The record gives the reactivity of an RNA of 177 nucleotides to 2A3 and DMS. Reactivities are rounded to 0.1 and cut off at 0 and 3.
RNA sequence: GGGAACGACUCGAGUAGAGUCGAAAACUCUUAUGCCACGAAACGCCCAUACACACCGAAACUGCAGGAGACAUUCUUUAUUCCUUACUCGCUUAAGGAUGUGUUUCCCAUCCAUCACUUUCGCGGGCACGGAUAUGGUAUUCGUACCAUAUCCGUGAAAAGAAACAACAACAACAAC
Reactivity to 2A3 in 0.01 (KOAc 150mM, MgCl2 10mM, bicine 150mM(pH8.5), 24C), signal-to-noise 9, nucleotides 027 to 126: c010u010c010u050u080a110u140g040c010c010a050c060g070a060a080a030c040g020c000c010c010a020u100a040c070a000c010a020c020c030g070a090a070a030c040u060g000c020a030g010g060a030g030a030c020a050u080u040c050u040u200u110a130u080u060c010c010u020u060a050c000u010c040g030c020u020u020a010a010g010g000a010u010g080u010g010u020u070u020c010c000c000a020u010c000c000a010u020c010a020c130u010u040u020c020g000c000g010g000g000
Reactivity to DMS in 0.01 (KOAc 150mM, MgCl2 10mM, bicine 150mM(pH8.5), 24C), signal-to-noise 4, nucleotides 027 to 126: c040u000c030u020u010a020u000g000c040c010a040c060g000a070a120a070c070g000c010c000c020a040u010a070c120a080c040a080c030c020g000a070a070a080c060u010g020c060a050g000g000a060g000a070c060a080u010u000c030u000u000u000a130u000u000c010c030u010u040a070c000u010c040g020c020u000u010a020a030g010g000a000u000g010u040g000u010u020u000c010c000c020a070u060c060c010a050u010c030a070c020u020u000u020c060g020c030g000g000g000